[RMDB]
RNA sequence: GGGAACGACUCGAGUAGAGUCGAAAACAGGAAACUGGUUAAUCGUUUUCCUUGGUAGUAUAGCGGAAACCAUAAAUAAGAAGAACUCUAAGUGCUUGAGUAGAGUGAAAAUAAUUAGACAGGCAAUUAAGGUACUCCACGUUCGCGUGGAGUACAACUGGUAGAGUAAGUUCGCUUACUCUACCAGAAAAGAAACAACAACAACAAC
Reactivity to DMS in 0.01 (KOAc 150mM, MgCl2 10mM, bicine 150mM(pH8.5), 24C), signal-to-noise 1, nucleotides 027 to 156: c040a090g000g000a070a030a110c080u010g000g000u010u010a090a030u040c040g040u000u000u000u000c000c040u020u010g000g050u000a090g090u010a090u010a060g040c030g030g020a080a030a110c080c010a050u000a040a060a090u000a110a200g000a100a100g010a120a090c010u000c040u000a060a120g030u000g010c070u010u020g040a140g010u000a120g010a080g040u010g000a060a090a030a040u000a050a040u010u000a090g000a100c060a040g000g000c040a050a110u000u000a050a110g000g010u000a040c000u000c000c000a000c010g030u030u030c300g030c080g000u000g010g000a010g020u020a000c000a000a020
Reactivity to 2A3 in 0.01 (KOAc 150mM, MgCl2 10mM, bicine 150mM(pH8.5), 24C), signal-to-noise 4, nucleotides 027 to 156: c040a020g050g090a040a010a020c060u110g010g070u150u160a120a070u190c060g000u030u020u050u050c010c000u020u050g060g010u030a050g010u020a050u100a090g040c040g020g040a040a040a020c020c000a020u080a130a090a020u130a090a030g110a060a010g030a040a020c000u000c000u010a000a010g040u050g240c020u020u010g010a010g000u000a010g000a020g020u150g050a020a030a000a010u090a010a010u180u000a010g000a010c000a010g010g020c000a020a020u140u120a200a020g080g000u000a000c010u000c010c010a010c000g010u040u010c160g020c000g090u000g000g000a000g000u000a000c000a000a010